[RMDB]
RNA sequence: GGGAACGACUCGAGUAGAGUCGAAAAGCUUACGAGAGUUAACACUUAUUUACGUGAAUACCAAUGAAAUUACAGAUGAGAACAUCUACUAUCUACUUAAGUUAUGAAUCUUCCCCAAAAUUCAUAAGAUUAUUUCAAACUUCGGUUUGAAAUAAUCAAAAGAAACAACAACAACAAC
Reactivity to 2A3 in 0.01 (KOAc 150mM, MgCl2 10mM, bicine 150mM(pH8.5), 24C), signal-to-noise 2, nucleotides 027 to 126: g020c000u060u060a010c020g000a020g010a010g130u020u080a100a010c000a010c080u080u120a090u150u150u100a080c050g020u020g010a080a050u130a150c040c070a010a150u200g040a110a100a040u160u080a060c040a080g050a040u010g020a070g030a120a050c010a020u040c010u000a000c040u040a020u120c020u020a040c000u080u030a080a030g040u010u020a070u040g000a040a040u030c090u080u050c000c000c000c060a000a050a050a100u040u000c000a010u000a120a000
Reactivity to DMS in 0.01 (KOAc 150mM, MgCl2 10mM, bicine 150mM(pH8.5), 24C), signal-to-noise 1, nucleotides 027 to 126: g000c040u000u000a010c040g000a130g000a070g020u000u030a120a110c120a110c010u000u000a120u010u010u010a170c100g000u000g010a100a120u010a120c070c030a080a110u000g010a050a050a060u030u020a120c140a050g020a060u020g000a150g010a090a120c040a040u000c030u000a050c070u000a040u000c020u010a030c040u000u000a040a050g000u000u000a020u000g020a040a010u000c050u000u000c060c020c000c150a070a070a030a100u000u000c050a010u000a050a130